Structure probing data (2A3 and DMS) for a 177-nucleotide construct.

RNA sequence: GGGAACGACUCGAGUAGAGUCGAAAAUUAGAUGCGGCAAAUUGAAUGUGCACUAUUCGAGCCACAGCGAGGGUAAGGGUCGAUGCACCUAAGUGCUGCUGGAACAGCACGCUUUUGGGGAUCGCAGCAUCGGCGCUAGGUUCGCCUAGCGCCGAUGAAAAGAAACAACAACAACAAC
Reactivity to 2A3 in 0.01 (KOAc 150mM, MgCl2 10mM, bicine 150mM(pH8.5), 24C), signal-to-noise 1, nucleotides 027 to 126: u160u170a070g120a030u030g010c000g060g030c000a000a030a070u180u130g080a110a030u060g050u200g110c010a000c050u080a000u030u110c000g010a060g060c000c000a090c030a000g230c100g130a140g030g000g040u100a030a090g000g030g060u120c050g000a050u100g000c000a030c010c010u030a110a000g010u000g000c070u000g000c070u080g050g000a110a020c000a030g010c000a000c000g000c000u060u030u060u140g000g000g000g050a070u030c020g010c040a030g010
Reactivity to DMS in 0.01 (KOAc 150mM, MgCl2 10mM, bicine 150mM(pH8.5), 24C), signal-to-noise 1, nucleotides 027 to 126: u010u010a040g000a090u050g040c000g000g060c000a030a160a050u020u000g000a130a090u010g000u000g020c040a060c040u000a030u000u000c040g020a160g010c030c050a000c130a150g010c020g000a060g020g000g000u000a100a100g030g030g000u020c040g010a060u020g050c030a060c000c050u000a040a010g000u000g000c090u030g000c020u030g000g030a180a220c040a010g000c010a030c000g020c040u020u000u020u000g020g000g040g010a020u000c050g000c060a150g000

Source: RMDB library OK1LIB, as collected in RNAgym.
For 2A3 the reverse transcriptase was SuperScript II with manganese.